This 177-nucleotide RNA was probed chemically with DMS.
DMS adducts were read by reverse transcription with MarathonRT.
Reactivities are rounded to 0.1 and cut off at 0 and 3.
Conditions: 150 mM KOAc, 10 mM MgCl2 and 150 mM bicine (pH 8.5), 24 C.

RNA sequence: GGGAACGACUCGAGUAGAGUCGAAAACUCUUUCAGCGAUCAUCCUCCAAAGAUUCCAAUCUUCUCGAAAGUCAACUGAAGGAAAUUUGUUGCUAAUUUUCAAAAUGUCCGAGUAAGAAGAUGAUAGCGUAUGUUCACUGUUCGCAGUGAACAUACGAAAAGAAACAACAACAACAAC
Reactivity to DMS in 0.01 (KOAc 150mM, MgCl2 10mM, bicine 150mM(pH8.5), 24C), signal-to-noise 2, nucleotides 027 to 126: c060u000c040u010u000u000c070a070g040c100g010a110u030c050a040u000c030c010u000c070c040a110a080a080g000a080u000u000c110c100a090a090u000c000u000u010c020u010c050g030a130a060a200g000u000c170a060a060c050u000g000a120a070g000g010a010a040a090u000u000u000g050u000u000g000c110u030a030a010u010u020u020u000c030a030a050a100a090u000g010u000c080c020g000a090g010u010a090a040g000a010a020g010a020u000g010a110u010a060g020